Source: RMDB library TTRDES, as collected in RNAgym. Structure probing data (2A3 and DMS) for a 177-nucleotide construct. 2A3 adducts were read by reverse transcription with SuperScript II with manganese. For DMS, 5,032 sequencing reads were counted. DMS adducts were read by reverse transcription with MarathonRT. The reactions ran in a buffer of 150 mM KOAc, 10 mM MgCl2 and 150 mM bicine (pH 8.5), at 24 C.

RNA sequence: GGGAACGACUCGAGUAGAGUCGAAAAGAUAUGGAUCCAGUGUAGGGAGCUGCAAUUCGGAAACGAAUUGACAGCGAAGAACUACCUGGAUCCUAAGUCAAAAGGUGCCGAGUUCGCUCGGCACCAACCUCUUAUAUGACUUCGGUCAUAUAAGAGGAAAAGAAACAACAACAACAAC
Reactivity to 2A3 in 0.01 (KOAc 150mM, MgCl2 10mM, bicine 150mM(pH8.5), 24C), signal-to-noise 2, nucleotides 027 to 126: g010a010u010a000u040g000g000a000u000c000c000a010g000u040g010u300a040g060g020g130a290g020c000u010g000c000a010a000u000u020c000g000g000a030a000a010c010g010a000a020u020u060g110a240c000a010g010c030g000a030a030g050a020a020c000u010a010c000c000u000g000g000a000u010c000c000u000a000a000g000u010c010a020a020a040a220g000g000u010g020c000c000g010a000g030u100u140c260g040c160u000c000g000g000c000a000c000c000a000a000
Reactivity to DMS in 0.01 (KOAc 150mM, MgCl2 10mM, bicine 150mM(pH8.5), 24C), signal-to-noise 3, nucleotides 027 to 126: g010a020u000a040u010g010g000a010u000c000c000a010g000u010g030u000a010g000g000g020a170g020c010u000g010c000a010a000u010u010c010g010g000a010a020a040c000g010a010a010u000u000g010a160c010a000g010c010g010a110a160g010a150a130c000u000a000c000c000u000g010g010a000u000c000c000u000a000a030g010u000c000a100a050a140a150g000g020u000g010c000c000g000a010g010u000u030c300g030c000u010c000g020g020c010a000c000c000a020a050